[RMDB]
RNA sequence: GGGAACGACUCGAGUAGAGUCGAAAAAUCCAUACCUAGAGAGGUGCGCACGGCGGAGGUGCUCUGGAUACAAGCUCUGCCUUCGAAACACCAUCGAUCGUGCCUUCUUCUUUACCUUCUUCUGGCUCUUCCGAUGAGACGCGACCGGUGGCAUCACGGGUAUUUAUCCGUUCGCGGAUAAAUACCCAAAAGAAACAACAACAACAAC
Reactivity to 2A3 in 0.01 (KOAc 150mM, MgCl2 10mM, bicine 150mM(pH8.5), 24C), signal-to-noise 1, nucleotides 027 to 156: a000u040c040c020a110u150a080c000c080u150a010g010a010g000a030g170g000u030g020c070g040c010a010c030g060g000c010g040g010a010g000g030u090g020c060u050c080u110g110g010a030u050a200c080a000a140g030c010u030c030u080g020c030c030u000u070c050g070a090a080a020c020a020c010c000a030u050c010g050a120u050c010g030u010g000c020c050u070u000c010u070u000c010u040u220u100a120c020c040u070u140c010u050u070c080u070g000g000c030u030c000u090u000c060c000g060a100u060g050a000g010a020c010g000c010g090a050c000c030g010g010u000g010g000c010a040u110c000a010c060